[RMDB]
RNA sequence: GGGAACGACUCGAGUAGAGUCGAAAAAAGGAACAAAUACUUCUAACCAGGUUGCUGUUCUUUAUCAGGAUGUUAACUGCACAGAAGUCCCUGUUGCUAUUCAUGCAGAUCAACUUACUCCUACUAACCCGCUAAUACGAUUCGUCGUAUUAGCGGGAAAAGAAACAACAACAACAAC
Reactivity to 2A3 in 0.01 (KOAc 150mM, MgCl2 10mM, bicine 150mM(pH8.5), 24C), signal-to-noise 2, nucleotides 027 to 126: a000a000g120g040a090a060c080a000a110a070u100a090c010u000u040c040u070a080a240c020c010a030g010g000u000u000g000c000u010g000u060u000c000u020u050u000a100u110c020a000g000g010a000u100g010u000u000a060a000c000u000g010c020a010c000a010g060a070a000g040u130c050c020c000u130g060u150u090g010c010u120a100u030u090c020a000u080g000c000a000g080a140u080c030a010a040c000u020u140a010c020u010c040c000u040a070c030u010a040a060
Reactivity to DMS in 0.01 (KOAc 150mM, MgCl2 10mM, bicine 150mM(pH8.5), 24C), signal-to-noise 1, nucleotides 027 to 126: a110a010g000g000a090a010c030a130a100a060u030a030c030u010u010c040u000a150a210c200c300a020g030g000u000u000g000c090u000g000u000u000c020u060u040u030a120u000c080a000g000g000a100u000g050u000u020a010a060c040u000g000c030a000c010a090g000a000a000g010u050c060c040c030u020g000u000u120g000c030u040a060u030u000c000a080u000g000c010a020g000a040u040c130a140a050c160u000u000a100c030u000c000c000u020a070c170u000a050a140
Chemical mapping of a 177-nucleotide RNA with 2A3 and DMS. For DMS the reverse transcriptase was MarathonRT. Source: RMDB library OK1LIB, as collected in RNAgym. For DMS, 1,160 sequencing reads were counted.